[RMDB]
RNA sequence: GGGAACGACUCGAGUAGAGUCGAAAAUCCAAACUAUUGGGAGAUUGAUGAGAUCGACCGACACCAAAUCAAGAUCAAUGAAGAUUACGAUUCCGUUUCGGUCAUCUCAUCAAUCUCCCAAUACGAAUCAUGCUGAUCACUUCGGUGAUCAGCAUGAAAAAGAAACAACAACAACAAC
Reactivity to DMS in 0.01 (KOAc 150mM, MgCl2 10mM, bicine 150mM(pH8.5), 24C), signal-to-noise 2, nucleotides 027 to 126: u030c010c000a080a100a170c220u000a000u000u000g010g000g030a030g000a010u000u010g020a000u000g000a050g020a000u000c100g030a000c010c000g020a000c070a000c020c060a120a020a030u000c000a090a300g000a000u000c000a100a150u000g000a100a090g010a010u000u000a050c300g000a030u000u010c210c300g000u000u010u000c010g010g000u000c000a010u000c000u000c000a010u000c000a010a000u030c000u000c000c010c000a010a040u000a000c150g000a090a140
About this RNA
This 177-nucleotide RNA was probed chemically with DMS. For DMS the reverse transcriptase was MarathonRT. DMS (dimethyl sulfate) methylates the pairing face of unpaired adenines and cytosines. The data come from the RNA Mapping Database (RMDB), libraries RFM100 and RFMREP. The reactions ran in a buffer of 150 mM KOAc, 10 mM MgCl2 and 150 mM bicine (pH 8.5), at 24 C.